Conditions: 150 mM KOAc, 10 mM MgCl2 and 150 mM bicine (pH 8.5), 24 C.
Chemical mapping of a 177-nucleotide RNA with DMS and 2A3.

[RMDB]
RNA sequence: GGGAACGACUCGAGUAGAGUCGAAAAGCGUCACCUAUCUGGUGCUGGCACCCGAGCACAACCUGGUCGACGAACUGGUUGCCACCGUCUGGCCGGACAGGACGGACCCCCGGUGGACGUAUGGUGAGCAGUAGGGUAAUUUCGAUUACCCUACUGCAAAAGAAACAACAACAACAAC
Reactivity to DMS in 0.01 (KOAc 150mM, MgCl2 10mM, bicine 150mM(pH8.5), 24C), signal-to-noise 3, nucleotides 027 to 126: g010c060g000u000c020a020c010c020u000a150u000c090u010g030g010u000g000c020u000g020g000c150a160c020c030c010g050a060g000c050a050c020a070a040c050c040u000g000g010u000c070g010a150c180g010a100a060c050u000g000g010u000u000g000c000c010a010c210c020g010u010c040u000g010g010c010c000g010g010a140c170a130g010g000a150c100g000g000a130c010c030c040c020c010g010g010u000g010g000a010c030g000u010a060u000g000g020u000g000a090
Reactivity to 2A3 in 0.01 (KOAc 150mM, MgCl2 10mM, bicine 150mM(pH8.5), 24C), signal-to-noise 2, nucleotides 027 to 126: g040c010g080u050c000a010c010c010u040a060u080c130u130g030g000u000g020c010u040g050g040c040a050c010c010c010g040a000g000c050a030c000a040a080c000c010u080g060g000u110c090g140a240c050g010a090a040c040u030g030g030u060u070g010c030c000a000c020c000g000u030c030u040g080g040c010c020g030g120a080c090a180g060g050a060c050g090g090a120c020c010c020c010c030g000g000u010g010g010a010c010g030u090a090u120g030g000u040g020a050

Values cover nucleotides 27 to 126.